This 177-nucleotide RNA was probed chemically with 2A3 and DMS. It was measured as part of the RMDB library OK1LIB.
RNA sequence: GGGAACGACUCGAGUAGAGUCGAAAAGAAGGAGAUGAAAGCGACUUUAGAAUCGGCUAACUGAGCAGGCAGAUCCAGACGGCAAGUAUCGUCGCCAGAGAUACAGUCGCAAAUAGCCGCAGGAGAAAGCAUUAGUGACUUUCGAGUCACUAAUGCUAAAAGAAACAACAACAACAAC
Reactivity to 2A3 in 0.01 (KOAc 150mM, MgCl2 10mM, bicine 150mM(pH8.5), 24C), signal-to-noise 4, nucleotides 027 to 126: g080a050a020g060g070a080g020a040u120g060a080a020a020g030c010g030a040c030u110u100u110a060g030a100a060u080c030g020g000c010u020a070a010c070u070g010a000g030c040a060g070g000c010a000g000a080u010c030c000a030g070a080c010g020g000c040a080a100g070u020a110u080c040g040u020c050g040c060c020a020g010a010g010a040u050a070c020a010g030u050c030g000c030a010a060a050u070a010g000c010c010g000c010a020g010g030a020g100a050a080
Reactivity to DMS in 0.01 (KOAc 150mM, MgCl2 10mM, bicine 150mM(pH8.5), 24C), signal-to-noise 3, nucleotides 027 to 126: g000a060a050g000g010a070g030a070u020g030a070a110a110g020c030g000a050c040u000u000u020a040g000a170a050u010c050g030g000c040u020a030a070c120u010g000a120g010c050a040g020g030c080a050g010a070u010c060c080a080g000a170c020g010g000c020a070a110g000u040a060u020c080g000u000c110g010c080c090a050g000a080g010a050u010a030c050a070g040u000c020g020c070a070a070a050u010a090g010c040c050g020c130a020g000g020a080g040a090a120